Chemical mapping of a 177-nucleotide RNA with DMS and 2A3.
It was measured as part of the RMDB library TTRDEL.
[RMDB]
RNA sequence: GGGAACGACUCGAGUAGAGUCGAAAAGAUAUGGAUAACAUCGAUCAUCAAGGACUUUGAUCUCGGAAACGAGGGAGUCCGCGAUGGGAGUUAUCCUAAGUCAAAGUUCGUUCUUCGGAACGAACAAGUCACAGAUCUAGUUCGCUAGAUCUGUGACAAAAGAAACAACAACAACAAC
Reactivity to DMS in 0.01 (KOAc 150mM, MgCl2 10mM, bicine 150mM(pH8.5), 24C), signal-to-noise 2, nucleotides 027 to 126: g000a080u000a300u000g010g000a010u000a000a040c010a190u020c060g000a110u030c000a010u010c010a020a300g030g000a020c000u000u000u010g000a080u000c000u000c000g000g000a100a030a150c000g030a020g000g020g010a020g030u000c010c000g000c300g000a020u000g020g000g010a040g010u000u000a010u000c000c000u000a010a070g030u000c050a040a050a160g010u000u000c010g020u000u020c000u000u010c270g020g000a000a000c000g030a000a000c010a060a140
Reactivity to 2A3 in 0.01 (KOAc 150mM, MgCl2 10mM, bicine 150mM(pH8.5), 24C), signal-to-noise 2, nucleotides 027 to 126: g000a020u060a050u140g010g000a000u020a020a000c020a300u240c020g160a230u160c030a000u000c000a010a020g010g000a000c030u210u270u140g110a130u170c000u000c000g020g030a100a090a120c010g020a000g000g010g010a000g000u010c000c020g000c000g000a010u000g000g000g020a030g000u000u000a000u030c000c010u010a130a040g040u000c060a160a050a030g000u000u000c010g000u000u000c000u000u060c280g100g010a000a000c000g000a000a000c000a000a020

The DMS profile rests on 1,137 reads.